[RMDB]
RNA sequence: GGGAACGACUCGAGUAGAGUCGAAAAACGGAGGCGGAGGUAAUAGCGGUGGUAAUGGAGGAGGUAGUGGUAAUGGUAAUGCUAUCGUCACCGCGUUGAGAAAGGAAUGUGCGCAAACUCGCUGGCCAAUUUGUUUGCCCAUCACGUCGGCCAACGACCCUUUUAAUUAUUUCGAUAAUUAAAAGGGAAAAGAAACAACAACAACAAC
Reactivity to DMS in 0.01 (KOAc 150mM, MgCl2 10mM, bicine 150mM(pH8.5), 24C), signal-to-noise 1, nucleotides 027 to 156: a090c060g000g010a070g000g030c050g040g000a050g000g020u030a070a100u000a090g020c050g000g000u000g000g010u010a080a090u000g010g000a100g000g020a140g020g030u000a040g000u010g010g020u000a050a090u010g040g000u000a070a120u000g080c080u000a070u000c000g000u010c010a070c000c010g020c030g020u000u000g000a100g000a090a130a110g010g000a070a090u000g000u000g010c040g000c020a050a040a080c080u010c020g030c020u000g020g020c000c000a030a060u010u010u000g020u000u010u010g050c050c020c030a130u000c060a040c040g000u000c010g030g000c000c010a020a030c020g000a250
Reactivity to 2A3 in 0.01 (KOAc 150mM, MgCl2 10mM, bicine 150mM(pH8.5), 24C), signal-to-noise 3, nucleotides 027 to 156: a000c030g010g000a000g020g030c080g020g050a040g010g050u080a060a090u060a090g020c050g040g010u040g030g020u090a110a090u120g040g040a030g000g020a020g050g000u050a010g010u030g030g020u070a080a080u080g060g020u100a100a040u150g030c030u030a020u080c040g030u010c010a010c030c010g000c040g000u020u110g070a070g060a070a050a010g110g020a050a060u110g030u050g040c050g000c030a020a070a050c030u040c050g000c030u030g020g000c010c010a050a040u010u080u070g030u050u060u070g010c010c020c000a040u120c050a010c060g050u070c070g020g010c000c040a010a000c010g020a020
This 207-nucleotide RNA was probed chemically with DMS and 2A3. For 2A3 the reverse transcriptase was SuperScript II with manganese. The reactions ran in a buffer of 150 mM KOAc, 10 mM MgCl2 and 150 mM bicine (pH 8.5), at 24 C. DMS adducts were read by reverse transcription with MarathonRT. Values cover nucleotides 27 to 156. For 2A3, 3,094 sequencing reads were counted.